[RMDB]
RNA sequence: GGGAACGACUCGAGUAGAGUCGAAAAAGGUACGAUCGAUGUACAUGCAGCUAGUAGAUGAUCUGCUAGAUAGUCUAGGCUCAUGUCGAUCUCAUGCUAGGAUCCUAUACUCUAGCCAUGAUAUCGAUGAAUCGAGGCGAUUCGUCGCCUCGAUUCAAAAAGAAACAACAACAACAAC
Reactivity to 2A3 in 0.01 (KOAc 150mM, MgCl2 10mM, bicine 150mM(pH8.5), 24C), signal-to-noise 1, nucleotides 027 to 126: a000g120g100u090a000c040g010a050u070c030g020a050u150g050u220a050c050a010u050g030c120a020g000c020u090a090g030u060a020g090a090u120g060a100u060c010u150g110c160u230a030g000a090u020a050g050u000c020u040a000g010g000c000u020c010a030u080g000u010c010g000a000u000c020u000c000a010u000g000c000u010a000g000g060a060u130c000c010u100a090u060a160c060u070c000u030a020g000c010c000a000u010g030a020u030a000u060c030g020a030
Reactivity to DMS in 0.01 (KOAc 150mM, MgCl2 10mM, bicine 150mM(pH8.5), 24C), signal-to-noise 2, nucleotides 027 to 126: a090g010g000u020a040c110g000a060u000c130g000a090u000g010u000a110c070a040u000g030c170a030g010c020u000a040g000u000a040g020a090u000g000a040u000c030u000g050c220u000a060g020a070u000a060g020u000c040u020a110g020g000c010u020c070a040u000g000u000c010g010a020u000c040u010c020a000u000g000c000u010a030g010g010a090u010c180c110u010a150u000a180c130u030c000u000a010g040c110c080a000u000g000a040u000a020u000c040g000a060

Structure probing data (2A3 and DMS) for a 177-nucleotide construct. The RNA was probed in 150 mM KOAc, 10 mM MgCl2 and 150 mM bicine (pH 8.5) at 24 C.